The record gives the reactivity of an RNA of 177 nucleotides to 2A3 and DMS. DMS adducts were read by reverse transcription with MarathonRT. For 2A3 the reverse transcriptase was SuperScript II with manganese. Source: RMDB library OK2TST, as collected in RNAgym.
RNA sequence: GGGAACGACUCGAGUAGAGUCGAAAACGGCCUACCGUGGGAUGCGCCCGUAGAGCUGCACGUGGUAGAGGAGGGCGAGGAGGGCGAGUACACGCGGCGUCCACACAUACGCCUACACUAGCUGGCCAGAGUUAGCUAAGUUCGCUUAGCUAACUCUAAAAGAAACAACAACAACAAC
Reactivity to 2A3 in 0.01 (KOAc 150mM, MgCl2 10mM, bicine 150mM(pH8.5), 24C), signal-to-noise 3, nucleotides 027 to 126: c010g030g000c020c010u030a040c010c040g020u090g010g040g020a090u100g010c030g020c000c020c010g000u100a060g010a040g050c080u090g000c040a030c130g100u120g000g060u080a040g010a070g090g050a080g040g010g030c060g030a040g030g040a060g050g000g000c040g010a030g020u070a020c080a030c100g040c020g030g000c000g020u040c030c010a080c000a000c000a050u150a060c040g000c000c010u050a010c040a040c070u100a060g000c030u020g050g000c000c030
Reactivity to DMS in 0.01 (KOAc 150mM, MgCl2 10mM, bicine 150mM(pH8.5), 24C), signal-to-noise 4, nucleotides 027 to 126: c120g010g010c030c020u000a080c120c040g030u000g010g030g010a130u020g000c070g020c040c000c060g010u000a080g000a140g010c070u010g030c050a090c110g010u000g010g020u010a030g020a120g000g000a170g000g000g010c070g020a100g000g000a170g000g000g010c040g000a100g010u010a080c100a070c130g010c090g000g000c030g000u010c040c050a110c150a060c130a070u010a080c070g000c020c000u010a090c100a100c080u010a060g030c070u000g000g010c060c080